[RMDB]
RNA sequence: GGGAACGACUCGAGUAGAGUCGAAAAGAUAUGGACCUCAGAGGCGACGAUCCGUAACAUCAUUCGGAAACGAAUGUGGGGGAGCCUCAAGGGUCCUAAGUCAAAGCAUAGCCUUCGGGCUAUGCAACUAGUAAUUAAACUUCGGUUUAAUUACUAGAAAAGAAACAACAACAACAAC
Reactivity to 2A3 in 0.01 (KOAc 150mM, MgCl2 10mM, bicine 150mM(pH8.5), 24C), signal-to-noise 7, nucleotides 027 to 126: g030a000u070a050u140g000g010a000c000c010u060c060a030g000a010g010g010c020g050a300c020g010a240u000c020c010g090u160a090a090c030a240u300c010a000u020u010c010g030g000a050a030a010c010g000a010a010u010g000u050g010g000g000g010g020a010g000c010c000u000c010a000a010g020g010g000u000c010c010u010a030a010g010u010c040a110a060a030g000c000a000u010a000g010c000c000u060u130c300g080g010g000c000u000a000u000g000c000a000a000
Reactivity to DMS in 0.01 (KOAc 150mM, MgCl2 10mM, bicine 150mM(pH8.5), 24C), signal-to-noise 9, nucleotides 027 to 126: g010a050u000a300u000g000g000a020c000c010u000c080a300g000a020g010g020c000g010a080c230g000a040u000c010c000g010u010a060a150c150a060u010c020a020u000u000c000g000g000a090a100a150c000g010a010a000u000g020u000g020g000g000g000g000a050g000c000c000u000c010a040a140g010g000g010u000c000c000u000a010a090g000u000c040a090a100a180g010c000a000u000a000g000c000c000u000u000c200g030g000g020c000u000a000u000g000c000a020a040
Structure probing data (2A3 and DMS) for a 177-nucleotide construct. For 2A3, 27,085 sequencing reads were counted. For DMS the reverse transcriptase was MarathonRT. It was measured as part of the RMDB library TTRDEL. High 2A3 reactivity points to a flexible backbone, as in loops and unpaired stretches. For 2A3 the reverse transcriptase was SuperScript II with manganese.